RNA sequence: GGGAACGACUCGAGUAGAGUCGAAAAUCUGGACCGUUCGCGGUCCAGAAACUACCGAGAAUCCGACUCGGUAUAUAAACGCAACCCUUGGAAACAAGGGAACACUCUGCUGCUUCGGCAGCAGAAAAUACAGUGAGUUGUUCGCAACUCACUGUAUAAAAGAAACAACAACAACAAC
Reactivity to DMS in 0.01 (KOAc 150mM, MgCl2 10mM, bicine 150mM(pH8.5), 24C), signal-to-noise 1, nucleotides 027 to 126: u000c000u000g000g000a020c000c010g020u000u000c260g000c000g040g020u000c000c000a010g010a020a070a180c130u000a040c000c020g000a010g000a110a170u000c040c040g030a120c010u000c000g000g020u000a030u010a110u000a020a080a110c240g000c180a060a120c000c000c030u000u000g000g000a230a110a290c010a010a010g020g000g000a060a050c080a040c160u000c000u000g000c000u000g000c000u000u000c160g030g010c000a040g020c000a010g000a000a020a020
The data come from the RNA Mapping Database (RMDB), library M2PK50. An RNA of 177 nucleotides, treated with DMS and read out base by base. Values cover nucleotides 27 to 126. The reactions ran in a buffer of 150 mM KOAc, 10 mM MgCl2 and 150 mM bicine (pH 8.5), at 24 C. Reactivities are rounded to 0.1 and cut off at 0 and 3.